Record summary: Structure probing data (2A3 and DMS) for a 177-nucleotide construct. For 2A3 the reverse transcriptase was SuperScript II with manganese. The DMS profile rests on 2,905 reads. For DMS the reverse transcriptase was MarathonRT. The 2A3 profile rests on 1,216 reads. It was measured as part of the RMDB library OK2TST. The RNA was probed in 150 mM KOAc, 10 mM MgCl2 and 150 mM bicine (pH 8.5) at 24 C.
[RMDB]
RNA sequence: GGGAACGACUCGAGUAGAGUCGAAAAUAGAAUUGCUGAGAUGGUGGAACGUCAUGUUAUCCCACUAACAAGUCAGGAGCUGGUGGAUAUCCUGGAGGAAGAUGUCGACUUUUCAGAAAUGAUGCAAAAUGUCCUGGAUAUUCGUAUCCAGGACAUUAAAAGAAACAACAACAACAAC
Reactivity to 2A3 in 0.01 (KOAc 150mM, MgCl2 10mM, bicine 150mM(pH8.5), 24C), signal-to-noise 1, nucleotides 027 to 126: u140a020g080a000a040u090u060g000c000u040g020a020g010a150u090g040g010u000g030g000a070a000c060g050u080c080a050u010g010u050u040a100u110c000c010c000a030c010u020a050a050c010a140a000g050u090c040a000g040g010a040g070c050u080g010g050u040g010g000a000u010a040u120c000c000u000g000g000a000g010g010a020a060g030a030u040g070u040c030g010a060c000u040u080u050u040c020a010g060a020a080a090u090g080a030u080g030c070a000a140
Reactivity to DMS in 0.01 (KOAc 150mM, MgCl2 10mM, bicine 150mM(pH8.5), 24C), signal-to-noise 3, nucleotides 027 to 126: u010a060g010a120a150u020u000g020c040u000g010a050g010a080u010g000g020u020g020g010a060a070c070g000u010c060a060u010g010u000u000a080u000c020c020c010a120c230u020a040a080c120a040a120g010u010c050a070g020g010a050g000c070u000g020g010u010g010g000a090u000a070u010c000c020u000g000g010a090g010g010a050a090g000a060u000g020u000c040g010a060c090u000u000u000u010c050a030g000a060a040a070u000g010a040u010g020c160a070a030